[RMDB]
RNA sequence: GGGAACGACUCGAGUAGAGUCGAAAAAGGACCUGAGAGGAGCCGAUGUUCCGUCGUACGUUUUGAAAAACGAGCCAGGGAGUGUGCCUGUUUGACGAGUCUAACCGGAGUAUCCGGGAAGGCGUAGCCUCACCCUUGAGUUCGCUCAAGGGUGAGGAAAAGAAACAACAACAACAAC
Reactivity to DMS in 0.01 (KOAc 150mM, MgCl2 10mM, bicine 150mM(pH8.5), 24C), signal-to-noise 3, nucleotides 027 to 126: a030g010g010a110c030c020u000g010a090g020a100g010g000a080g010c050c060g000a140u000g010u000u000c060c000g010u000c070g010u000a080c080g000u010u000u000u030g000a090a070a050a050a020c030g030a160g000c080c040a050g000g000g020a060g000u000g000u000g020c030c020u000g000u010u000u010g010a110c110g010a120g000u000c010u020a050a260c020c000g020g020a290g000u010a090u010c000c020g000g010g000a120a030g000g000c000g010u010a100g000
Reactivity to 2A3 in 0.01 (KOAc 150mM, MgCl2 10mM, bicine 150mM(pH8.5), 24C), signal-to-noise 1, nucleotides 027 to 126: a000g090g000a010c000c020u020g090a090g010a030g100g040a000g040c020c110g050a060u100g070u060u000c000c000g040u010c030g010u060a020c020g000u020u030u120u030g130a110a110a000a040a010c010g010a020g000c050c000a040g040g020g000a030g010u070g040u040g080c030c030u050g090u160u040u110g030a030c040g020a010g020u000c010u020a050a040c010c020g010g000a090g150u210a090u040c000c010g010g000g000a000a010g010g000c020g000u010a010g030